Notes: Chemical mapping of a 177-nucleotide RNA with 2A3 and DMS. DMS adducts were read by reverse transcription with MarathonRT. It was measured as part of the RMDB library OK2TST. For 2A3 the reverse transcriptase was SuperScript II with manganese.
[RMDB]
RNA sequence: GGGAACGACUCGAGUAGAGUCGAAAAUGUCAAACUUGCGCAUGUAGCCUCUAGGGCGACCGCAAACAUUACAGCGAUUAUAAGCACGUGUGCUAAAUUUAGGCUCUCGCUGAGACUUUAUAAUCAACGAAUGAACUAGGUUCGCCUAGUUCAUUCGAAAAGAAACAACAACAACAAC
Reactivity to 2A3 in 0.01 (KOAc 150mM, MgCl2 10mM, bicine 150mM(pH8.5), 24C), signal-to-noise 2, nucleotides 027 to 126: u090g010u000c030a020a010a130c080u030u070g010c020g010c040a120u140g000u070a030g030c000c000u000c110u210a140g100g000g000c010g010a000c000c020g000c000a020a090a050c020a010u030u180a040c050a030g020c020g060a010u020u040a030u070a130a020g020c010a010c090g140u120g020u020g010c020u070a110a120a290u190u210u110a060g030g000c000u000c000u000c050g060c140u060g030a030g030a060c000u020u140u060a050u060a070a070u050c020a030a060
Reactivity to DMS in 0.01 (KOAc 150mM, MgCl2 10mM, bicine 150mM(pH8.5), 24C), signal-to-noise 3, nucleotides 027 to 126: u000g000u000c080a060a090a210c180u010u000g010c000g040c190a050u010g020u010a240g020c010c000u000c290u020a130g020g000g010c010g030a040c080c000g020c030a050a030a120c080a090u000u000a080c110a070g020c110g020a020u000u000a040u000a050a090g010c040a070c070g010u000g000u000g000c000u000a030a110a150u000u000u000a080g010g000c050u000c040u000c060g010c120u000g000a090g000a120c050u000u000u000a040u010a060a020u030c050a100a160